[RMDB]
RNA sequence: GGGAACGACUCGAGUAGAGUCGAAAAGAAGGUUGAUGGCAAACCCUACAAGCUGGCGCUGAAAAUCUACGACAACCAAUCGAACGUCAAUCUGAGCGUGCGCCAAUACACGCAACUUGUGACCACAAUGCCUACUCCUCUUCGGAGGAGUAGGCAUAAAAGAAACAACAACAACAAC
Reactivity to DMS in 0.01 (KOAc 150mM, MgCl2 10mM, bicine 150mM(pH8.5), 24C), signal-to-noise 1, nucleotides 027 to 126: g000a240a020g000g000u010u000g000a070u000g050g010c050a170a090a150c040c080c140u080a090c130a160a080g000c020u000g020g000c030g010c030u000g010a140a060a130a070u020c060u000a070c060g000a170c040a090a060c030c070a110a260u000c150g000a050a110c040g050u000c020a070a020u000c030u000g030a290g000c050g000u000g000c000g020c030c030a080a020u000a090c080a040c060g000c010a060a230c050u020u000g000u000g000a200c130c040a020c160a170
Chemical mapping of a 177-nucleotide RNA with DMS. It was measured as part of the RMDB library OK2TST. The reactions ran in a buffer of 150 mM KOAc, 10 mM MgCl2 and 150 mM bicine (pH 8.5), at 24 C. For DMS the reverse transcriptase was MarathonRT.